Annotation: This 207-nucleotide RNA was probed chemically with 2A3. Source: RMDB library M2RFOK, as collected in RNAgym. For 2A3 the reverse transcriptase was SuperScript II with manganese. The RNA was probed in 150 mM KOAc, 10 mM MgCl2 and 150 mM bicine (pH 8.5) at 24 C. The 2A3 profile rests on 437 reads.
[RMDB]
RNA sequence: GGGAACGACUCGAGUAGAGUCGAAAAACUGGAUCUACGGAUGCAGAACUACGUUCAUCCAAUUUAUUUGGACGCAUGAAAUGAGAAUAGGGAACGGGAUUCUCAUACGCAGGCUACGGCCUGCGAAAAAACUCCUUAUGCUUCGGCAUAAGGAGAAGUAAAGGAAUGGCUUCGGCCAUUCCUUUACAAAAGAAACAACAACAACAAC
Reactivity to 2A3 in 0.01 (KOAc 150mM, MgCl2 10mM, bicine 150mM(pH8.5), 24C), signal-to-noise 1, nucleotides 027 to 156: a000c000u000g020g010a010u010c010u050a020c200g130g020a010u020g100c020a010g000a210a030c090u060a020c100g010u020u020c000a000u000c000c010a000a010u140u190u120a280u120u100u000g000g000a000c000g000c050a060u120g110a100a230a110u000g070a010g000a000a060u040a000g120g000g000a000a000c000g000g010g010a000u000u020c020u020c020a000u050a070c000g010c000a010g040g000c020u020a090c300g090g000c040c010u000g000c010g010a000a000a000a000a000a000c000u000c000c000u000u000a000u000g020c000u050u060c280g060g030c000a000u000a000a000g010g010a000g000a000a000